An RNA of 177 nucleotides, treated with DMS and 2A3 and read out base by base. 2A3 adducts were read by reverse transcription with SuperScript II with manganese.
RNA sequence: GGGAACGACUCGAGUAGAGUCGAAAAUAAAAAGGGACGUGCAGCAGGCGAGGAACCCAAGCAGCUGUCCCGGGUGCCAUCGCCCUACGUGAGGACACCAGGCGUGGAUAGCUCCAGGCCUAAAAAAGCAUAACUUAAGAUUCGUCUUAAGUUAUGCAAAAGAAACAACAACAACAAC
Reactivity to DMS in 0.01 (KOAc 150mM, MgCl2 10mM, bicine 150mM(pH8.5), 24C), signal-to-noise 6, nucleotides 027 to 126: u020a040a050a050a120a090g000g010g000a030c030g020u000g020c030a050g020c140a100g010g000c010g000a090g020g000a110a060c010c010c020a080a130g000c040a100g020c050u010g010u010c000c010c020g010g000g000u000g000c000c010a130u000c030g000c020c060c080u000a060c120g010u000g000a090g010g000a060c020a030c040c030a060g000g010c020g020u000g000g000a040u000a120g010c240u000c010c010a020g010g020c010c010u010a000a020a040a060a040a050
Reactivity to 2A3 in 0.01 (KOAc 150mM, MgCl2 10mM, bicine 150mM(pH8.5), 24C), signal-to-noise 4, nucleotides 027 to 126: u080a000a050a010a020a020g030g000g000a020c070g070u060g030c020a040g000c010a010g010g030c020g050a070g090g070a050a040c010c000c010a030a020g000c010a000g030c020u110g000u020c000c000c010g000g000g000u010g000c020c060a170u040c030g020c000c000c030u070a060c070g090u060g040a030g000g040a040c010a010c050c030a010g040g000c060g080u020g010g010a050u060a100g020c040u000c000c010a030g050g000c010c010u080a100a080a010a000a020a010
Reactivities are given for positions 27 through 126.